[RMDB]
Source: RMDB library OK3TST, as collected in RNAgym. This 207-nucleotide RNA was probed chemically with 2A3 and DMS. The DMS profile rests on 1,333 reads. Conditions: 150 mM KOAc, 10 mM MgCl2 and 150 mM bicine (pH 8.5), 24 C. DMS (dimethyl sulfate) methylates the pairing face of unpaired adenines and cytosines.
RNA sequence: GGGAACGACUCGAGUAGAGUCGAAAAGGCUGGUGCCGGAGCCGAUACCGGAAUACGAGACCUUAUGUGCGGUCGAAUGCACUGAAGUACGAAAGUACGAAGAGGUCAAACCGAGGACCGAGACUCGAUAUGCUCGGUAGAUGGAGCUUUACAUCAACCGUAUAAUCAGGUUCGCCUGAUUAUACGGAAAAGAAACAACAACAACAAC
Reactivity to 2A3 in 0.01 (KOAc 150mM, MgCl2 10mM, bicine 150mM(pH8.5), 24C), signal-to-noise 2, nucleotides 027 to 156: g030g010c020u050g040g080u090g030c010c000g020g000a010g070c040c050g090a040u100a120c000c010g000g040a050a000u130a070c070g020a060g040a160c020c020u070u060a080u200g020u000g010c020g000g050u130c080g040a060a040u150g000c010a000c000u050g060a130a000g010u010a010c010g010a090a040a050g000u000a010c050g010a050a060g060a010g000g000u020c020a060a000a020c050c020g030a010g000g030a000c010c030g000a010g020a020c010u050c050g080a110u070a050u230g030c020u000c000g000g030u010a020g000a000u040g050g030a060g040c070u170u070u100a010c010a020u030c050a040a090
Reactivity to DMS in 0.01 (KOAc 150mM, MgCl2 10mM, bicine 150mM(pH8.5), 24C), signal-to-noise 1, nucleotides 027 to 156: g040g000c040u000g030g050u000g010c000c070g010g000a040g030c010c100g060a290u030a020c040c030g000g030a050a120u000a120c060g010a210g010a090c000c010u000u010a130u000g030u010g050c010g000g030u040c140g050a150a180u000g010c040a030c050u000g030a140a160g000u000a020c000g040a130a200a290g040u010a000c000g040a060a170g000a050g000g020u000c000a040a050a190c060c010g090a140g020g000a100c040c000g000a070g010a110c170u000c030g000a160u000a100u000g000c010u000c020g000g040u000a030g000a130u000g010g010a100g010c040u030u000u000a030c040a100u000c030a080a300